The record gives the reactivity of an RNA of 177 nucleotides to DMS and 2A3. For DMS, 1,031 sequencing reads were counted. DMS adducts were read by reverse transcription with MarathonRT. Conditions: 150 mM KOAc, 10 mM MgCl2 and 150 mM bicine (pH 8.5), 24 C. It was measured as part of the RMDB library OK1LIB.
RNA sequence: GGGAACGACUCGAGUAGAGUCGAAAAUCAGGCUCAGCUCUGAAUUGACAGCACACCGCCGUCGAGGCAAGCUUGAGCGGGGUGCACUCAUCAUAGUGCAGGAAAGAAGCUCUACAUAUUCAGGAGGUCCGGGGUUUAGAUUCGUCUAAACCCCGGAAAAAGAAACAACAACAACAAC
Reactivity to DMS in 0.01 (KOAc 150mM, MgCl2 10mM, bicine 150mM(pH8.5), 24C), signal-to-noise 1, nucleotides 027 to 126: u040c060a200g000g050c040u000c040a050g000c030u030c030u000g020a070a000u000u000g000a040c000a110g000c000a240c160a130c270c060g040c000c010g000u030c000g000a010g000g040c070a090a030g000c000u000u140g000a000g000c000g000g000g000g000u000g000c000a000c000u000c220a270u180c300a160u050a010g000u000g000c120a020g000g000a010a050a140g000a070a040g000c000u000c040u070a020c040a000u010a160u000u030c140a040g000g010a120g000g000
Reactivity to 2A3 in 0.01 (KOAc 150mM, MgCl2 10mM, bicine 150mM(pH8.5), 24C), signal-to-noise 3, nucleotides 027 to 126: u150c010a000g060g000c010u000c020a000g000c010u000c030u050g090a050a030u000u070g010a030c010a020g010c000a070c050a070c160c010g000c000c030g040u070c020g000a010g030g000c070a070a010g050c010u180u190g010a000g000c000g010g040g000g010u020g000c010a020c040u030c020a250u060c020a060u300a260g010u010g000c020a000g000g190a000a140a070g030a020a020g020c010u000c000u070a040c010a060u180a140u200u220c070a060g000g080a020g040g000